[RMDB]
Structure probing data (2A3) for a 207-nucleotide construct. 2A3 is a SHAPE reagent: it acylates the 2'-hydroxyl of flexible nucleotides of all four kinds. The reactions ran in a buffer of 150 mM KOAc, 10 mM MgCl2 and 150 mM bicine (pH 8.5), at 24 C. The data come from the RNA Mapping Database (RMDB), library OK3TST.
RNA sequence: GGGAACGACUCGAGUAGAGUCGAAAAGAACUCACGUGUACGAUCGAGAACGUGUGUGAACGAUCUCACGAACUCUCUCACACGAGUGAUCGAACUCGAGUGUGUGAACGUUCGAACUCACACGUACGUACUCUCACGUACGUUCGAUCACGAGUGAGUUACUGGCCGUGUUCGCACGGCCAGUAACAAAAGAAACAACAACAACAAC
Reactivity to 2A3 in 0.01 (KOAc 150mM, MgCl2 10mM, bicine 150mM(pH8.5), 24C), signal-to-noise 2, nucleotides 027 to 156: g020a070a020c010u000c040a050c010g090u060g070u150a040c070g040a110u080c040g030a020g030a130a050c040g020u050g000u030g060u130g150a070a050c050g000a090u050c070u070c040a030c010g010a050a030c000u030c000u020c000u000c040a010c000a000c030g010a000g010u010g070a090u090c020g000a040a010c030u040c090g020a040g010u010g000u000g000u010g010a120a020c060g050u130u120c020g010a090a050c010u060c030a000c010a000c090g000u020a000c000g000u000a100c040u020c040u030c140a030c020g000u030a000c010g000u040u000c000g000a000u000c000a000c060g030a030g010u060g020a070